[RMDB]
RNA sequence: GGGAACGACUCGAGUAGAGUCGAAAAUGAAGCAAAUCCAUAAUUGCCAAUGAUGAGCAAUUCGCUAUUGCCGCCUAAAAACGGUUAGCCGGGGCUGCUAGAGCCUUGUUACGAAAGAUAGCCGGCGUUACGGCAUGAUGGUUCGCCAUCAUGCCAAUAGAUUCUUAUCCUUCGGGAUAAGAAUCUAAAAAGAAACAACAACAACAAC
Reactivity to DMS in 0.01 (KOAc 150mM, MgCl2 10mM, bicine 150mM(pH8.5), 24C), signal-to-noise 2, nucleotides 027 to 156: u010g030a110a120g020c040a080a110a150u000c040c040a090u010a030a060u000u000g010c010c010a090a170u000g010a160u000g020a130g010c030a010a040u000u000c030g020c020u000a100u000u000g050c000c000g010c020c020u000a070a090a090a120a080c030g010g040u000u000a090g000c050c050g020g020g000g000c010u000g020c060u000a110g010a130g050c000c010u000u000g020u010u000a160c110g000a100a040a120g010a100u010a050g020c010c080g000g040c070g010u010u000a070c110g020g040c000a000u010g010a020u000g010g020u000u000c300g020c000c000a010u000c000a010u000g000c000c000a000a020
Reactivity to 2A3 in 0.01 (KOAc 150mM, MgCl2 10mM, bicine 150mM(pH8.5), 24C), signal-to-noise 3, nucleotides 027 to 156: u130g040a040a000g030c070a050a050a090u070c040c040a060u080a100a030u080u000g020c030c030a100a110u240g110a140u060g000a180g030c010a010a010u090u030c050g020c030u040a060u080u200g000c000c010g040c000c010u070a060a040a010a010a010c020g000g030u050u030a010g000c040c000g030g000g000g000c000u030g010c020u090a050g040a010g180c010c010u020u050g050u070u080a040c060g030a090a030a020g030a030u020a010g050c000c010g040g020c020g040u080u090a030c060g000g000c000a000u010g000a000u000g000g040u050u060c150g040c050c000a000u010c000a000u000g000c000c000a000a000

The data come from the RNA Mapping Database (RMDB), library M2RFPK. This 207-nucleotide RNA was probed chemically with DMS and 2A3. Conditions: 150 mM KOAc, 10 mM MgCl2 and 150 mM bicine (pH 8.5), 24 C. 2A3 adducts were read by reverse transcription with SuperScript II with manganese.